[RMDB]
RNA sequence: GGGAACGACUCGAGUAGAGUCGAAAAUGAUUAUAGAUAUGGACCGAGCAAAUUGUCAGGGAUGGGUGUCGGAAACGACACAGUCCCUUGGAUUUAUUUGCGUUUGACGUCCUAAGUCGCGUUGAAACGAAUAGGUUAGGUUCGCCUAACCUAUUCGAAAAGAAACAACAACAACAAC
Reactivity to DMS in 0.01 (KOAc 150mM, MgCl2 10mM, bicine 150mM(pH8.5), 24C), signal-to-noise 6, nucleotides 027 to 126: u010g010a160u010u010a110u010a090g010a070u010a300u010g010g010a020c010c010g000a080g020c000a010a010a010u000u000g010u000c010a020g000g010g000a000u010g000g020g020u000g010u000c010g010g000a090a060a170c010g010a010c000a000c010a300g010u000c000c000c000u000u000g010g010a020u000u010u000a010u000u000u000g000c000g000u000u000u010g020a150c300g000u000c000c000u000a050a120g010u000c020g010c200g010u010u010g020a080a080a180
Reactivity to 2A3 in 0.01 (KOAc 150mM, MgCl2 10mM, bicine 150mM(pH8.5), 24C), signal-to-noise 3, nucleotides 027 to 126: u080g030a010u200u240a210u300a300g040a030u040a030u240g010g000a010c000c030g050a020g060c010a030a000a010u020u020g020u040c010a010g170g040g000a010u010g300g260g050u010g000u000c000g030g000a060a080a040c000g000a000c000a000c000a030g000u000c020c000c000u000u070g000g000a000u160u300u040a020u000u080u010g000c000g050u060u140u170g010a000c010g030u050c010c010u040a130a030g020u020c020g060c090g170u120u100g190a180a130a090